[RMDB]
RNA sequence: GGGAACGACUCGAGUAGAGUCGAAAAAGUUCGUGGAAGCCGUAAUGGCAGGAAGCGAACGAACGUCGGAACAGGGAAACUCAAGUCAAUCUGGGGCCCGUGAAAAGGCGAGUACGGUGUUCGUACCGCCUUGGCUCUCGUUCGCGAGAGCCAAGGCAAAAGAAACAACAACAACAAC
Reactivity to DMS in 0.01 (KOAc 150mM, MgCl2 10mM, bicine 150mM(pH8.5), 24C), signal-to-noise 1, nucleotides 027 to 126: a130g010u000u000c000g060u010g010g000a300a110g010c010c010g020u020a220a090u040g000g000c000a070g010g020a300a300g000c020g040a010a000c000g000a090a130c130g040u000c060g000g010a090a140c150a140g000g000g000a100a030a080c010u010c060a000a070g000u000c200a060a150u020c040u010g010g000g010g000c110c060c070g010u000g000a100a030a100a010g000g000c000g010a140g000u000a010c000g010g000u000g050u000u000c000g010u000a020c000c050

The data come from the RNA Mapping Database (RMDB), library RFMREP. An RNA of 177 nucleotides, treated with DMS and read out base by base. The RNA was probed in 150 mM KOAc, 10 mM MgCl2 and 150 mM bicine (pH 8.5) at 24 C. The DMS profile rests on 500 reads.